[RMDB]
RNA sequence: GGGAACGACUCGAGUAGAGUCGAAAAAGCUGAUAGGUACCAUGAACAUUCACUGUUGUAUAUGCAUAUGGUUUAUAUUGUGUUCUGUGUCAGUAUUGCCUACCAGAGCUGUCUCAACAUUAGCUCUGAUUCUCUGUCUAGCAUCUAGACCAGAGACCUAUAGCGCUAUGUUCGCAUAGCGCUAUAGAAAAGAAACAACAACAACAAC
Reactivity to DMS in 0.01 (KOAc 150mM, MgCl2 10mM, bicine 150mM(pH8.5), 24C), signal-to-noise 3, nucleotides 027 to 156: a120g040c010u010g010a040u000a130g020g020u000a080c040c020a060u000g010a100a040c030a040u030u000c100a130c090u000g020u000u000g020u000a140u000a070u010g020c060a150u000a040u000g000g010u000u010u000a100u000a080u030u000g030u000g010u010u000c050u010g060u010g010u000c000a040g010u000a080u010u010g020c020c030u000a050c030c000a020g030a030g030c000u000g000u000c050u000c300a070a090c060a090u000u000a040g010c010u010c010u010g010a070u000u010c010u000c000u000g020u000c000u000a020g020c170a090u010c040u000a030g000a030c020c030a010g000a030g000a050c300
Reactivity to 2A3 in 0.01 (KOAc 150mM, MgCl2 10mM, bicine 150mM(pH8.5), 24C), signal-to-noise 4, nucleotides 027 to 156: a000g050c030u010g000a020u020a050g030g040u080a040c030c030a030u030g030a040a040c010a050u070u130c080a080c150u070g030u070u070g100u200a150u080a060u300g030c030a040u070a060u180g050g030u010u070u040a090u030a040u080u120g070u020g000u070u040c020u030g120u050g000u080c000a000g020u040a140u080u130g030c000c020u040a040c020c020a000g000a010g000c000u030g060u110c070u060c210a080a160c060a090u120u130a000g010c000u030c000u030g020a040u150u020c000u000c010u000g010u000c000u000a000g020c040a270u120c040u070a000g000a030c000c050a010g000a000g000a040c000